[RMDB]
The record gives the reactivity of an RNA of 177 nucleotides to 2A3 and DMS. It was measured as part of the RMDB library M2PK90. Reactivities are given for positions 27 through 126.
RNA sequence: GGGAACGACUCGAGUAGAGUCGAAAAACUUUUAGCGUUUGCAAGACGCUGUUCUUGCAAUGAUCUGGAUUUAGCGCACGGAGGUCCGAAAUCCAGAUCAACAUUUCGGACCUCCGGGCUAAUAAAACAUUUACAUAUUGUUCGCAAUAUGUAAAUGAAAAGAAACAACAACAACAAC
Reactivity to 2A3 in 0.01 (KOAc 150mM, MgCl2 10mM, bicine 150mM(pH8.5), 24C), signal-to-noise 4, nucleotides 027 to 126: a000c040u110u100u090u170a070g020c030g050u030u050u070g010c010a010a000g010a010c020g100c300u120g070u110u000c000u000u020g000c010a010a030u070g050a090u040c050u080g110g010a080u050u020u030a040g010c080g010c070a050c140g010g010a000g000g010u010c000c000g000a000a000a010u070c100c040a050g020a140u080c010a000a000c010a000u000u010u010c010g000g010a010c010c020u010c000c000g010g010g000c010u000a000a010u050a060a080a000a010
Reactivity to DMS in 0.01 (KOAc 150mM, MgCl2 10mM, bicine 150mM(pH8.5), 24C), signal-to-noise 5, nucleotides 027 to 126: a070c070u010u000u010u010a070g010c050g010u000u000u010g020c020a010a020g000a010c010g020c240u010g010u010u000c000u000u000g000c010a020a030u000g000a100u000c040u000g000g000a130u000u000u000a020g020c040g020c080a130c020g010g000a030g000g000u010c000c000g010a010a020a000u000c140c120a160g010a100u000c140a050a080c150a050u000u000u000c000g000g000a020c000c000u000c000c000g000g000g000c000u000a010a020u000a050a070a070a160
Conditions: 150 mM KOAc, 10 mM MgCl2 and 150 mM bicine (pH 8.5), 24 C. 2A3 adducts were read by reverse transcription with SuperScript II with manganese. For 2A3, 5,546 sequencing reads were counted.